[RMDB]
Notes: This 207-nucleotide RNA was probed chemically with 2A3. Values cover nucleotides 27 to 156. Conditions: 150 mM KOAc, 10 mM MgCl2 and 150 mM bicine (pH 8.5), 24 C. The data come from the RNA Mapping Database (RMDB), library M2RFPK. For 2A3, 899 sequencing reads were counted.

RNA sequence: GGGAACGACUCGAGUAGAGUCGAAAAAGAGCCGGAUUCGUCCGGCUCAACGGGGGAUACGUGUGGUGCCGUCCGCUCCCCCUAUGGCAUAACAAAUGCACCACACACUAGGCUACGGCCUAGUGAAAAAAGGUGUAUGUGUUCGCACAUACACCAACAUCUCGGUAGACUUCGGUCUACCGAGAUGAAAAGAAACAACAACAACAAC
Reactivity to 2A3 in 0.01 (KOAc 150mM, MgCl2 10mM, bicine 150mM(pH8.5), 24C), signal-to-noise 1, nucleotides 027 to 156: a000g010a000g000c000c000g010g020a050u040u060c140g040u030c040c000g000g030c000u030c000a000a000c000g000g000g010g000g030a000u020a090c030g010u000g000u000g070g020u000g010c000c000g010u060c040c030g150c060u050c000c000c000c000c030u060a190u200g150g060c150a090u080a220a090c060a070a030a020u090g000c000a000c010c010a000c000a000c000a000c000u000a000g000g000c030u020a030c300g090g000c000c000u000a000g000u000g000a050a000a010a000a000a000g000g000u000g000u000a000u010g010u000g000u000u070c140g040c000a000c000a000u000a000c000a000c000c000a010a010